Structure probing data (2A3 and DMS) for a 177-nucleotide construct.
Source: RMDB library M2PK50, as collected in RNAgym.
The reactions ran in a buffer of 150 mM KOAc, 10 mM MgCl2 and 150 mM bicine (pH 8.5), at 24 C.
For DMS, 2,257 sequencing reads were counted.
The 2A3 profile rests on 3,784 reads.
RNA sequence: GGGAACGACUCGAGUAGAGUCGAAAAGCAUCUUGCUUCGGCAAGAUGCAAAUAACGGUCAGUGCUUGCACCUAGUCGUAAAUGCUAACUGGCCUUACGCUAAAACGAAUGCGUUCGCGCAUUCGAAUCUUGAGUAGGUGUUCGCACCUACUCAAGAAAAAGAAACAACAACAACAAC
Reactivity to 2A3 in 0.01 (KOAc 150mM, MgCl2 10mM, bicine 150mM(pH8.5), 24C), signal-to-noise 3, nucleotides 027 to 126: g000c000a000u000c000u000u000g000c010u030u050c160g080g010c000a000a000g010a000u000g000c000a020a010a000u040a020a020c030g000g000u000c000a000g000u000g040c040u080u070g000c030a020c020c170u110a050g150u120c070g010u030a030a050a100u150g030c030u040a080a080c010u010g000g000c000c010u010u050a070c070g010c030u140a110a040a010a020c000g010a000a010u000g020c000g030u020u040c290g000c000g000c040a010u020u000c000g010a000a050
Reactivity to DMS in 0.01 (KOAc 150mM, MgCl2 10mM, bicine 150mM(pH8.5), 24C), signal-to-noise 3, nucleotides 027 to 126: g000c000a010u000c000u000u000g010c000u000u020c210g030g030c000a000a000g000a000u010g020c020a000a030a040u020a050a070c210g010g010u000c000a010g010u000g000c110u000u000g020c090a100c070c100u000a140g000u000c200g030u010a040a090a060u000g030c010u000a090a030c000u000g000g000c000c030u000u000a030c160g000c110u000a060a050a100a170c000g020a000a000u000g020c010g020u000u020c300g000c020g020c000a020u000u000c000g000a060a020